[RMDB]
RNA sequence: GGGAACGACUCGAGUAGAGUCGAAAAUCACGCCCAGGCGCUGCAUCGCGCAUUCAAGAUGUUGGCCGAGGACGGAAUUGACCUGCAGACCUGCGGGCUGGUGGCGGUCGGACACCGGGUGGUCCACAGCGGUGGCUCAAUUCGUUGAGCCACCGCUAAAAGAAACAACAACAACAAC
Reactivity to DMS in 0.01 (KOAc 150mM, MgCl2 10mM, bicine 150mM(pH8.5), 24C), signal-to-noise 1, nucleotides 027 to 126: u000c270a180c060g000c000c000c000a260g000g070c010g050c010u000g000c060a040u030c100g050c150g000c050a150u010u080c010a000a050g010a070u000g030u000u000g000g100c000c000g000a010g000g070a070c000g000g010a100a140u040u000g030a080c010c000u000g160c000a070g010a150c060c100u000g070c090g010g000g050c020u050g030g000u000g000g000c010g050g040u040c070g010g000a090c000a030c060c060g000g080g010u030g000g020u030c070c060a180c100
Reactivity to 2A3 in 0.01 (KOAc 150mM, MgCl2 10mM, bicine 150mM(pH8.5), 24C), signal-to-noise 1, nucleotides 027 to 126: u120c010a010c110g050c000c010c000a000g030g000c170g000c060u080g000c000a000u050c000g020c000g180c100a050u140u210c050a100a130g040a140u130g000u060u030g030g000c000c000g000a160g040g030a000c030g040g070a020a030u030u070g030a040c000c000u030g090c040a010g000a100c000c000u150g000c100g130g000g060c000u040g000g030u020g040g040c000g000g060u030c000g000g000a120c170a100c000c010g000g000g190u070g040g010u060c010c020a080c090
Source information: The data come from the RNA Mapping Database (RMDB), library OK1LIB. The record gives the reactivity of an RNA of 177 nucleotides to DMS and 2A3. The reactions ran in a buffer of 150 mM KOAc, 10 mM MgCl2 and 150 mM bicine (pH 8.5), at 24 C. For DMS the reverse transcriptase was MarathonRT.